An RNA of 207 nucleotides, treated with 2A3 and read out base by base. The 2A3 profile rests on 993 reads.
RNA sequence: GGGAACGACUCGAGUAGAGUCGAAAAGGUCCCCGACAACCUCGCUAAUCCUCGGGAAAAAAAUCAAACGCCAACGAUAACUCGUAUGCGUUGGCCGCCUAAAGAGAUUUAGGUAGCCCGUUGGCGUCCGUGGGGCCUACAACGCGGACGCCGACGCCUAACACGAGCUGUUCGCAGCUCGUGUUAGAAAAGAAACAACAACAACAAC
Reactivity to 2A3 in 0.01 (KOAc 150mM, MgCl2 10mM, bicine 150mM(pH8.5), 24C), signal-to-noise 1, nucleotides 027 to 156: g030g010u040c050c010c010c010g010a010c010a090a060c000c020u100c060g060c120u120a060a060u120c000c020u040c080g050g000g000a030a050a010a000a000a000a040u210c140a120a080a030c050g000c010c030a000a000c010g010a050u070a150a080c050u050c170g000u080a040u220g020c020g000u000u000g000g000c010c010g020c000c010u030a030a000a000g120a000g010a040u000u010u000a010g000g020u020a020g020c000c060c030g000u000u000g000g010c000g010u000c000c000g000u000g000g030g020g030c010c000u060a080c040a060a000c010g000c010g000g000a000c010g010c000c000g000a000c000g030c010

The RNA was probed in 150 mM KOAc, 10 mM MgCl2 and 150 mM bicine (pH 8.5) at 24 C.